Structure probing data (2A3 and DMS) for a 207-nucleotide construct.
High 2A3 reactivity points to a flexible backbone, as in loops and unpaired stretches.
RNA sequence: GGGAACGACUCGAGUAGAGUCGAAAACGCUGGGUCCGUAACAUCUGUAGUGUUACAUCGAUCAUCUGAAGCGCGCACGGAUGGGAGUAACCUACAGUGGGACCUGUGCUGAAGCGCGCACGGCAACCGAAAGGUGCGAGACCUGGAUUCGUCCAGGAAUAUAUUCCUUAUUCGUAAGGAAUAUAUUAAAAGAAACAACAACAACAAC
Reactivity to 2A3 in 0.01 (KOAc 150mM, MgCl2 10mM, bicine 150mM(pH8.5), 24C), signal-to-noise 7, nucleotides 027 to 156: c010g010c000u010g000g000g000u000c000c000g010u010a010a010c030a300u170c010u000g000u000a020g010u020g050u300u000a030c050a130u300c110g000a000u000c000a000u000c000u020g060a210a060g010c000g000c000g000c000a010c010g010g010a000u000g000g010g000a030g010u000a000a000c000c000u000a000c000a000g000u000g000g000g010a000c000c000u000g000u000g000c000u020g020a140a060g000c000g000c000g000c010a010c000g000g000c020a010a000c000c000g050a100a040a030g010g000u010g000c010g020a060g050a080c000c000u010g000g010a030u090u110c220g040u040c100c000a000g000g000
Reactivity to DMS in 0.01 (KOAc 150mM, MgCl2 10mM, bicine 150mM(pH8.5), 24C), signal-to-noise 6, nucleotides 027 to 156: c030g030c020u000g020g010g020u000c010c030g030u000a030a030c080a030u010c000u000g010u000a090g020u010g010u000u000a000c000a290u000c100g000a050u010c010a040u000c030u000g010a050a050g030c010g040c020g020c010a300c020g000g010a040u010g010g010g010a090g020u010a020a040c010c000u000a020c020a040g040u000g000g010g000a040c010c010u000g000u000g010c010u000g000a060a080g020c020g030c010g010c020a300c030g010g000c020a060a070c010c010g010a100a090a170g020g010u000g010c010g000a180g010a140c000c010u000g000g000a100u000u000c250g010u000c000c010a020g010g000